Chemical mapping of a 207-nucleotide RNA with 2A3 and DMS.
RNA sequence: GGGAACGACUCGAGUAGAGUCGAAAAACCAAGUCUGGGGGCCGAUGAGGGUUGGCUCAAAGUAGGGUUUUGACUUGAAAACUCAAGCUGUGACCCCAAAACGAUGGAGGUAAUUGAGAAUCCUCCUAAAACUAUGGACACUUCGGUGUCCAUAGAAUCAGUACAAUAUCUUCGGAUAUUGUACUGAAAAAGAAACAACAACAACAAC
Reactivity to 2A3 in 0.01 (KOAc 150mM, MgCl2 10mM, bicine 150mM(pH8.5), 24C), signal-to-noise 5, nucleotides 027 to 156: a000c010c000a020a010g120u030c020u060g030g030g010g020g040c010c020g030a020u080g100a150g080g140g000u020u060g000g000c000u010c020a030a030a030g050u060a070g010g050g000u000u010u060u080g030a040c000u030u070g060a070a100a110a080c040u030c020a000a010g010c030u050g040u120g130a210c000c010c000c030a040a060a010a050c110g050a060u130g000g010a010g020g010u070a150a150u130u170g050a060g030a120a050u070c000c000u010c010c000u020a010a010a000a020c000u000a000u000g000g000a000c000a000c010u030u080c250g060g000u000g000u000c000c000a000u000a000g000a000a030
Reactivity to DMS in 0.01 (KOAc 150mM, MgCl2 10mM, bicine 150mM(pH8.5), 24C), signal-to-noise 2, nucleotides 027 to 156: a120c010c030a040a230g020u010c020u000g020g020g010g010g060c060c040g030a050u000g000a210g020g030g000u000u000g000g010c000u000c030a040a030a060g040u010a220g020g020g020u000u010u000u000g010a040c010u000u020g000a070a090a130a160c140u000c020a030a040g020c040u010g020u020g000a250c030c010c000c040a050a100a090a090c080g000a100u030g010g000a060g030g020u000a060a180u010u020g020a180g010a220a110u000c010c000u000c010c000u000a020a050a050a150c000u000a000u000g000g000a030c000a010c000u000u010c270g050g040u010g000u000c000c000a000u000a000g000a050a090